[RMDB]
RNA sequence: GGGAACGACUCGAGUAGAGUCGAAAAAAUGCUUCAUCAACGACACCUGUCAUACUUAGUCGACUCAUAUUUUUCGAUUGGUACUCAGUUGUUGGAGAGUCGCUGGUUGGCUCGCUCGAUGGUGGGAUCAUUCACAACAGUUCGCUGUUGUGAAUGAAAAAGAAACAACAACAACAAC
Reactivity to DMS in 0.01 (KOAc 150mM, MgCl2 10mM, bicine 150mM(pH8.5), 24C), signal-to-noise 4, nucleotides 027 to 126: a070a030u020g000c070u000u010c040a100u000c040a050a130c070g020a040c050a130c090c020u010g000u010c070a080u050a020c030u010u050a030g030u010c000g020a040c190u000c090a110u050a120u000u010u000u010u000c010g010a030u010u000g010g010u020a040c100u020c020a030g030u000u000g020u000u000g020g010a160g010a040g000u010c010g010c030u000g000g030u000u000g000g020c020u000c050g000c300u010c030g000a050u000g010g020u010g010g010g010a120
Reactivity to 2A3 in 0.01 (KOAc 150mM, MgCl2 10mM, bicine 150mM(pH8.5), 24C), signal-to-noise 9, nucleotides 027 to 126: a000a000u130g020c020u040u040c020a260u020c010a040a020c010g040a020c010a030c020c030u020g030u080c030a040u030a150c020u180u260a040g030u070c020g020a020c020u020c120a120u110a260u180u150u030u060u030c010g010a020u010u040g050g030u060a050c040u030c060a010g000u010u020g020u020u030g030g010a030g000a010g040u020c010g000c040u050g120g010u060u090g010g000c000u010c020g020c010u010c010g050a050u050g020g070u060g020g010g020a060
The record gives the reactivity of an RNA of 177 nucleotides to DMS and 2A3. The RNA was probed in 150 mM KOAc, 10 mM MgCl2 and 150 mM bicine (pH 8.5) at 24 C. The DMS profile rests on 8,300 reads.